[RMDB]
RNA sequence: GGGAACGACUCGAGUAGAGUCGAAAAGCUGCUAAAGCGCGUGGUAUCGACGUGUUGUUGGCUGAUACUGCCGGGCGUUUGCAAAAUAAAGCCCAUUUGAUGGAAGAGCUGAAGAAGAUUGUCCGCGUACAUGCAUUGGGUUCGCCCAAUGCAUGUAAAAAGAAACAACAACAACAAC
Reactivity to DMS in 0.01 (KOAc 150mM, MgCl2 10mM, bicine 150mM(pH8.5), 24C), signal-to-noise 3, nucleotides 027 to 126: g010c080u010g010c070u010a090a120a060g000c030g040c050g040u010g010g000u000a040u000c020g000a050c030g010u010g010u000u000g010u000u000g020g020c040u010g010a050u000a060c020u000g010c100c160g020g010g020c010g010u000u000u000g010c100a080a070a060a090u000a050a090a100g010c020c000c010a120u010u010u000g020a120u010g000g000a080a060g020a050g010c030u000g000a090a070g010a090a060g000a090u000u000g010u000c030c040g000c140g010
Reactivity to 2A3 in 0.01 (KOAc 150mM, MgCl2 10mM, bicine 150mM(pH8.5), 24C), signal-to-noise 1, nucleotides 027 to 126: g010c040u040g000c020u230a190a030a030g040c010g000c030g040u020g030g080u090a060u170c100g060a010c030g060u040g050u050u110g040u060u040g010g080c010u030g000a040u010a050c000u030g040c050c020g110g070g010c020g000u070u070u120g080c080a060a050a040a000u170a080a050a020g010c080c010c020a030u260u160u100g180a100u040g020g050a040a070g020a070g000c040u100g010a060a020g030a000a030g020a040u080u120g090u000c030c010g000c010g040